This 207-nucleotide RNA was probed chemically with DMS and 2A3.
2A3 adducts were read by reverse transcription with SuperScript II with manganese.
For DMS, 5,980 sequencing reads were counted.
The reactions ran in a buffer of 150 mM KOAc, 10 mM MgCl2 and 150 mM bicine (pH 8.5), at 24 C.
It was measured as part of the RMDB library RNAMAK.
RNA sequence: GGGAACGACUCGAGUAGAGUCGAAAAGCGCGUUUCGACGCGCACGUACGAUAUGGAGAUCCGAGUGGCAAUGACGUGUGGUCACAGUCGGAAACGAUCACAGCCACAUAAGACAGCCACCGGAUCUCCUAAGUCUGUGUUGGUCGUUCGCGACCAAGUUUUCACAAAUUUUCGAAUUUGUGAAAACAAAAGAAACAACAACAACAAC
Reactivity to DMS in 0.01 (KOAc 150mM, MgCl2 10mM, bicine 150mM(pH8.5), 24C), signal-to-noise 3, nucleotides 027 to 156: g040c010g070c010g000u000u010u020c190g040a080c000g040c030g010c000a020c140g020u000a060c070g010a070u020a280u000g030g020a060g000a000u000c010c020g000a230g020u010g010g020c030a230a140u030g010a080c170g020u000g060u000g010g050u000c020a160c150a150g010u000c030g030g010a130a090a110c030g020a000u000c040a110c180a250g040c000c010a030c080a030u000a070a160g000a210c080a100g000c000c000a050c040c000g000g000a000u000c000u010c020c000u000a000a040g000u000c010u000g010u000g000u000u020g020g000u000c020g020u000u010c180g020c030g000a250c020c010a020a210
Reactivity to 2A3 in 0.01 (KOAc 150mM, MgCl2 10mM, bicine 150mM(pH8.5), 24C), signal-to-noise 6, nucleotides 027 to 156: g020c020g020c020g020u040u140u220c210g080a040c010g030c000g030c110a000c010g060u110a020c010g000a030u030a050u230g000g000a000g000a000u010c000c010g040a100g110u010g000g020c090a170a200u070g020a040c050g010u020g000u010g010g040u160c040a030c040a070g000u000c010g000g050a060a090a060c020g000a020u160c020a020c010a040g000c000c000a000c000a000u060a060a040g100a050c030a090g300c000c000a000c000c010g000g000a000u000c000u000c000c000u000a010a000g000u000c020u040g060u010g030u050u150g030g000u000c000g010u030u060c200g000c000g100a010c000c010a020a050